[RMDB]
RNA sequence: GGGAACGACUCGAGUAGAGUCGAAAAGCACCGCGUUCGCGCGGUGCAAAAACCGUAGGAUGUACUACCCACCAAUUACGAAGAACUGAGUUCGAAAGAGCUCAGGGAGUAAGUGAGGUACAUCCUAAACGGAAAAACAGCAGGUUCGCCUGCUGAACCAUAAUCGUGACUUCGGUCACGAUUAUGGAAAAGAAACAACAACAACAAC
Reactivity to 2A3 in 0.01 (KOAc 150mM, MgCl2 10mM, bicine 150mM(pH8.5), 24C), signal-to-noise 1, nucleotides 027 to 156: g000c000a000c000c000g010c030g120u080u060c180g010c000g040c040g300g000u030g020c080a000a000a030a000a030c040c000g010u030a050g000g000a000u000g000u000a010c010u050a080c000c050c000a010c000c090a070a120u010u010a080c060g190a300a080g000a040a000c010u010g030a030g000u000u030c040g100a130a110a060g000a000g030c000u020c000a000g000g000g000a040g000u000a040a000g010u000g030a020g000g100u000a000c000a000u000c000c000u020a020a020a020c040g000g030a040a000a070a010a120c000a000g040c000a000g000g000u100u130c150g170c150c000u000g020c010u000g000a000a010
An RNA of 207 nucleotides, treated with 2A3 and read out base by base.
2A3 adducts were read by reverse transcription with SuperScript II with manganese.
It was measured as part of the RMDB library RNAMAK.
The reactions ran in a buffer of 150 mM KOAc, 10 mM MgCl2 and 150 mM bicine (pH 8.5), at 24 C.
For 2A3, 676 sequencing reads were counted.